Overview
The data come from the RNA Mapping Database (RMDB), library TTRDES. Structure probing data (2A3 and DMS) for a 177-nucleotide construct. 2A3 adducts were read by reverse transcription with SuperScript II with manganese. The DMS profile rests on 6,265 reads. For 2A3, 16,334 sequencing reads were counted. The reactions ran in a buffer of 150 mM KOAc, 10 mM MgCl2 and 150 mM bicine (pH 8.5), at 24 C.
[RMDB]
RNA sequence: GGGAACGACUCGAGUAGAGUCGAAAAGAUAUGGAUCCAGUUGCUUUUGACGCUCGACGGAUCGGAAACGAUCCCAAGAGCGAUAAGCAACGGAUCCUAAGUCAAAAGAUAGAGUUCGCUCUAUCAACUCUCUAUACAUCUUCGGAUGUAUAGAGAGAAAAGAAACAACAACAACAAC
Reactivity to 2A3 in 0.01 (KOAc 150mM, MgCl2 10mM, bicine 150mM(pH8.5), 24C), signal-to-noise 4, nucleotides 027 to 126: g030a010u060a020u140g010g010a000u000c040c100a200g020u000u010g010c020u170u170u170u300g290a200c140g000c010u000c010g020a030c040g000g000a010u010c000g000g000a030a030a010c000g000a000u010c020c010c010a030a020g000a010g000c000g010a010u010a010a000g000c000a000a000c000g000g000a000u000c000c000u000a040a010g050u020c030a050a010a060a190g010a000u020a010g030a000g030u060u170c300g070c120u000c010u010a000u020c000a020a070
Reactivity to DMS in 0.01 (KOAc 150mM, MgCl2 10mM, bicine 150mM(pH8.5), 24C), signal-to-noise 6, nucleotides 027 to 126: g000a040u000a300u010g000g010a000u000c000c000a150g030u000u000g010c000u000u000u000u010g010a280c150g000c010u000c000g010a300c300g000g000a010u000c000g000g000a060a110a170c020g010a010u000c000c000c000a030a300g000a010g000c000g020a010u000a010a020g010c000a010a000c000g000g010a000u000c000c000u000a010a080g010u000c020a140a090a110a140g010a010u000a010g010a020g010u000u020c300g020c010u000c000u000a000u000c010a100a230